[RMDB]
RNA sequence: GGGAACGACUCGAGUAGAGUCGAAAAAGAUCUUUCUUCGGAAAGAUCUAAAAAAUCCUAAGUCACGUGGGACAUGCUUGACAUCGGAAACGAUGUUCCGAGCAACAGCCGUAACAUCGUGAUAUGGAAAAAAUAUUGAACCUUCGGGUUCAAUAAACCUAUUAACCUUAUUCGUAAGGUUAAUAGGAAAAGAAACAACAACAACAAC
Reactivity to 2A3 in 0.01 (KOAc 150mM, MgCl2 10mM, bicine 150mM(pH8.5), 24C), signal-to-noise 6, nucleotides 027 to 156: a000g000a000u000c000u010u000u010c010u040u050c200g010g000a000a000a000g000a000u000c000u000a000a000a000a010a010a020u050c040c010u070a170a020g030u000c000a000c010g010u030g020g010g030a060c080a160u060g000c000u020u020g010a010c000a010u000c000g040g020a100a060a030c010g000a010u010g040u120u060c050c020g010a010g000c000a030a070c030a070g060c010c010g030u040a060a030c050a300u190c030g000u000g000a010u000a060u130g000g020a070a070a010a080a040a000u140a010u050u040g000a000a010c000c000u020u050c300g110g000g000u000u000c010a000a000u010a020a010a000
Reactivity to DMS in 0.01 (KOAc 150mM, MgCl2 10mM, bicine 150mM(pH8.5), 24C), signal-to-noise 2, nucleotides 027 to 156: a030g010a000u000c000u010u000u000c000u000u020c300g060g000a030a020a020g020a010u000c000u000a010a000a030a100a070a040u000c000c000u010a060a250g030u000c020a010c030g040u000g000g000g000a060c040a300u000g030c000u000u000g010a150c010a010u020c010g010g010a180a110a160c020g000a050u000g010u000u000c040c020g020a040g050c000a050a040c070a180g020c000c040g060u000a040a080c050a060u000c040g030u000g020a020u000a300u000g000g020a010a010a060a160a100a110u000a030u010u000g000a020a010c000c000u000u000c300g070g050g000u010u000c000a000a000u000a020a060a080